[RMDB]
RNA sequence: GGGAACGACUCGAGUAGAGUCGAAAAAGGGGUUAUCAAUGAGUGACUACCGCGACGACUCCAACGACACGGCGGUAAUCAGCGACACGACCUGGCUGGGGUUGUCGGCCGUCAGCGAAGCACCGCGAGAUCGAGAGGGUUUCGACCCUCUCGAUCUAAAAGAAACAACAACAACAAC
Reactivity to DMS in 0.01 (KOAc 150mM, MgCl2 10mM, bicine 150mM(pH8.5), 24C), signal-to-noise 1, nucleotides 027 to 126: a140g020g010g000g030u000u000a130u020c060a110a110u000g000a110g020u000g030a100c160u000a060c030c000g000c040g000a080c020g010a030c060u010c030c020a100a080c090g000a070c070a030c300g000g030c000g020g000u000a030a070u000c080a080g010c120g000a060c060a140c060g000a100c100c000u000g030g000c020u060g030g000g010g010u000u000g000u000c030g000g030c050c040g000u010c110a070g010c040g010a080a120g020c090a110c010c040g000c040g010

Source: RMDB library OK2TRN, as collected in RNAgym. This 177-nucleotide RNA was probed chemically with DMS. DMS adducts were read by reverse transcription with MarathonRT. Values are in units of 0.01, from 0 to 300, in steps of 10. Values cover nucleotides 27 to 126. The RNA was probed in 150 mM KOAc, 10 mM MgCl2 and 150 mM bicine (pH 8.5) at 24 C.